This 207-nucleotide RNA was probed chemically with 2A3. The reactions ran in a buffer of 150 mM KOAc, 10 mM MgCl2 and 150 mM bicine (pH 8.5), at 24 C. Values cover nucleotides 27 to 156.
RNA sequence: GGGAACGACUCGAGUAGAGUCGAAAAGUGUAGGUUCGCCUACACAAAAACCGUAGGUGCGAAGUCUUGAGGCUGUGGAGGUUCGAAAGAGCUACCCACCCACAGCUACCCACCAAGUCACGCACCUAAACGGAAAAAAGCGAGAUUCGUCUCGCAACCUUGUCCUCUACUUCGGUAGAGGACAAGGAAAAGAAACAACAACAACAAC
Reactivity to 2A3 in 0.01 (KOAc 150mM, MgCl2 10mM, bicine 150mM(pH8.5), 24C), signal-to-noise 1, nucleotides 027 to 156: g000u000g000u000a010g040g000u030u110c280g050c020c000u000a000c010a000c000a000a130a010a020a000c010c000g050u000a010g010g000u000g000c000g070a250a060g010u030c000u000u010g000a030g000g020c000u000g010u000g010g000a040g000g000u000u010c070g020a140a120a070g040a080g040c020u060a080c000c060c020a090c030c000c000a020c000a000g010c020u020a050c040c030c000a020c000c010a000a000g000u000c000a020c100g000c000a000c020c000u020a020a040a000c000g050g000a090a140a000a030a000a000g030c030g010a010g000a010u040u180c130g060u020c090u000c000g250c010a000a000